[RMDB]
RNA sequence: GGGAACGACUCGAGUAGAGUCGAAAAUAGAGUUAUCUGCUACUUGCAGCCAAAUGUAAUCCUAACUAAUAUAGGCAAUAAAUCAUGUUUUUAUAUCACUAUGUAGGUCUUCCAAUCUAUUGUCUUUGCCAGAGCUGUCUCCAUUCUUCUAAAAGGAACGUCAAAAUCAGUUCGCUGAUUUUGACGUAAAAGAAACAACAACAACAAC
Reactivity to 2A3 in 0.01 (KOAc 150mM, MgCl2 10mM, bicine 150mM(pH8.5), 24C), signal-to-noise 2, nucleotides 027 to 156: u080a010g060a020g040u070u090a080u080c030u000g050c000u050a090c040u040u070g030c010a010g020c000c000a050a100a030u090g030u080a070a090u110c030c030u050a050a000c030u050a060a180u160a080u060a110g010g030c020a020a050u110a140a080a030u080c040a040u070g050u030u010u030u070u050a140u020a010u060c010a010c050u050a040u090g040u060a020g020g030u060c050u130u000c060c000a030a090u000c000u060a070u030u140g010u000c000u020u060u050g000c010c000a030g000a010g000c010u010g020u080c010u000c020c000a040u030u040c020u050u000c010u020a050a090a060a020g040g100a050
Reactivity to DMS in 0.01 (KOAc 150mM, MgCl2 10mM, bicine 150mM(pH8.5), 24C), signal-to-noise 1, nucleotides 027 to 156: u020a100g010a100g010u010u000a080u020c050u020g020c010u010a080c100u000u000g030c000a050g000c050c080a020a090a120u050g000u000a070a110u000c020c020u010a050a200c060u020a100a140u010a130u010a040g010g040c060a060a020u000a020a030a080u010c030a090u000g020u000u000u000u000u050a070u010a060u030c020a080c040u000a050u010g020u000a030g020g010u010c050u030u000c070c060a050a060u010c040u000a050u010u010g020u000c010u000u000u010g000c050c000a110g000a090g020c030u000g020u010c010u000c010c010a150u000u000c030u010u000c070u030a050a070a090a140g000g010a070